[RMDB]
The data come from the RNA Mapping Database (RMDB), library OK2TST.
This 177-nucleotide RNA was probed chemically with DMS.

RNA sequence: GGGAACGACUCGAGUAGAGUCGAAAAGAGUACUGUGAAAAAGGUGAAAUCAGAGCAACUUCAUCAUUCCAUGUGCACAAGGAAAAGACACCGGCGUUGUGAGUAUUCCCACUUCAUGCAGCACCACCUGAUGCAGAUGUUUCGACAUCUGCAUCAGAAAAGAAACAACAACAACAAC
Reactivity to DMS in 0.01 (KOAc 150mM, MgCl2 10mM, bicine 150mM(pH8.5), 24C), signal-to-noise 1, nucleotides 027 to 126: g010a170g000u020a090c030u040g000u000g010a030a090a100a180a120g010g040u000g000a010a050a150u040c070a110g030a100g010c080a030a060c070u000u000c030a020u030c040a110u000u040c050c060a050u000g030u010g010c020a020c040a050a090g000g010a020a070a100a140g000a130c040a030c140c020g020g000c070g020u020u000g000u000g000a070g020u000a150u000u000c000c000c020a130c090u000u010c040a070u000g000c030a100g000c070a090c040c020a090c230
DMS adducts were read by reverse transcription with MarathonRT.